An RNA of 177 nucleotides, treated with DMS and 2A3 and read out base by base. Source: RMDB library TTRDEL, as collected in RNAgym. For DMS the reverse transcriptase was MarathonRT.
RNA sequence: GGGAACGACUCGAGUAGAGUCGAAAAGAUAUGGAUCGGGCACCAAGCUAUGAAGUCGGAAACGAUGGAGCUUGUGUUGAUCCUAAGUCAAAAGAUUAUUGAAGCAGUUCGCUGCUUCAAUAAUCAACUGAGUUAUAAUGUUCGCAUUAUAACUCAGAAAAGAAACAACAACAACAAC
Reactivity to DMS in 0.01 (KOAc 150mM, MgCl2 10mM, bicine 150mM(pH8.5), 24C), signal-to-noise 7, nucleotides 027 to 126: g000a030u010a300u000g000g000a020u000c000g010g020g020c050a030c140c110a010a010g020c000u000a220u010g010a130a220g000u000c000g000g000a140a100a180c000g000a010u000g010g000a010g020c000u000u000g010u000g010u000u010g010a010u000c000c000u000a040a090g010u010c040a080a090a120a140g000a010u000u000a000u000u000g010a020a010g000c000a010g010u000u020c260g010c000u000g000c000u000u000c000a000a000u000a000a000u000c000a070a140
Reactivity to 2A3 in 0.01 (KOAc 150mM, MgCl2 10mM, bicine 150mM(pH8.5), 24C), signal-to-noise 7, nucleotides 027 to 126: g040a010u070a060u140g000g000a000u000c090g080g080g000c020a020c120c200a080a000g000c010u110a180u300g020a040a010g010u000c010g000g050a110a040a050c010g010a010u020g010g020a000g000c000u000u000g000u010g010u010u040g010a000u000c000c010u010a160a030g050u050c040a050a030a060a130g000a000u000u000a000u010u010g000a010a000g000c000a010g010u080u180c230g030c190u000g010c000u000u000c000a000a000u000a000a000u000c000a000a000
The reactions ran in a buffer of 150 mM KOAc, 10 mM MgCl2 and 150 mM bicine (pH 8.5), at 24 C. The DMS profile rests on 8,993 reads. The 2A3 profile rests on 16,293 reads.